[RMDB]
RNA sequence: GGGAACGACUCGAGUAGAGUCGAAAAGUAUAUAAAGUCCUCUAAGUCUAGAGUUGUCAUCAGCGGGAAAGUGGUUCACCGCGACGUCCCUAUAGACAUUAAAUACCUAGACGGGUUUGCCGCUGUGUAGUAAAACCGGAUUCGUCCGGUUUUACUAAAAAGAAACAACAACAACAAC
Reactivity to DMS in 0.01 (KOAc 150mM, MgCl2 10mM, bicine 150mM(pH8.5), 24C), signal-to-noise 2, nucleotides 027 to 126: g000u040a080u010a140u000a080a070a160g000u000c010c000u020c090u020a000a160g010u000c010u000a020g010a140g000u000u000g000u000c040a100u000c110a150g030c040g000g000g020a080a090a160g010u010g010g010u000u010c150a150c030c010g000c050g030a030c160g000u010c010c030c010u000a170u010a030g000a030c030a110u030u020a060a050a110u000a100c060c000u010a030g020a060c020g000g010g000u000u020u020g020c030c000g000c030u000g030u000g000